[RMDB]
RNA sequence: GGGAACGACUCGAGUAGAGUCGAAAAUAAGGUUUAUUCGUAAACCUUAAAAAAACCUUUGUGGUGGGUCAAGCAACAGCUAUGCCAACCCAUUGGGUUGACAUAGACAUGCUUGCCCACCACUCUGGUAAAAAAGUGGCUCGUUCGCGAGCCACAAGUCAAUUAACAACUUCGGUUGUUAAUUGACAAAAGAAACAACAACAACAAC
Reactivity to 2A3 in 0.01 (KOAc 150mM, MgCl2 10mM, bicine 150mM(pH8.5), 24C), signal-to-noise 1, nucleotides 027 to 156: u070a010a000g000g000u010u020u020a040u040u080c090g040u030a000a000a000c000c000u000u000a060a000a000a000a000a020a040c010c000u000u000u060g030u010g000g010u020g000g030g020u300c070a000a000g000c010a040a100c040a150g040c010u000a000u000g010c000c000a010a010c070c010c070a300u070u300g000g000g000u000u000g010a000c000a000u010a000g020a120c010a030u060g000c010u000u000g010c000c010c000a000c000c010a000c000u010c010u000g000g030u040a120a000a000a000a000a080g000u000g000g000c010u000c000g020u090u110c300g010c010g060a030g000c060c030a000c040a000a010